[RMDB]
RNA sequence: GGGAACGACUCGAGUAGAGUCGAAAAUCGGUUUUCGAACCGACCAUCGGGAAAAUUAACUAUAGGUAAAGUGGAUUAUUUGCUAAGUAAUUGAAUUGUAAAUUCUUAUGAGUUCGAAUCUCAUAUUUUCCGCCAAGUAUGCUGAGUUCGCUCAGAAGCUAGCUUCUGUUUUCGAACAGAAGCUAGCAAAAGAAACAACAACAACAAC
Reactivity to 2A3 in 0.01 (KOAc 150mM, MgCl2 10mM, bicine 150mM(pH8.5), 24C), signal-to-noise 1, nucleotides 027 to 156: u040c000g000g000u010u020u000u000c060g040a050a020c000c000g020a000c040c020a040u070c030g020g030g000a000a200a000a000u120u070a180a020c000u080a050u090a300g020g020u040a040a030a020g050u040g070g020a020u100u090a010u070u240u000g020c070u090a120a040g030u010a020a120u020u010g010a020a040u000u140g020u140a150a210a090u010u010c010u000u040a070u010g020a010g020u000u190c050g020a030a060u010c000u000c000a000u010a030u010u030u010u000c020c030g100c090c000a050a030g050u060a070u170g080c040u010g020a020g060u070u040c080g000c070u020c000a030g020a020a000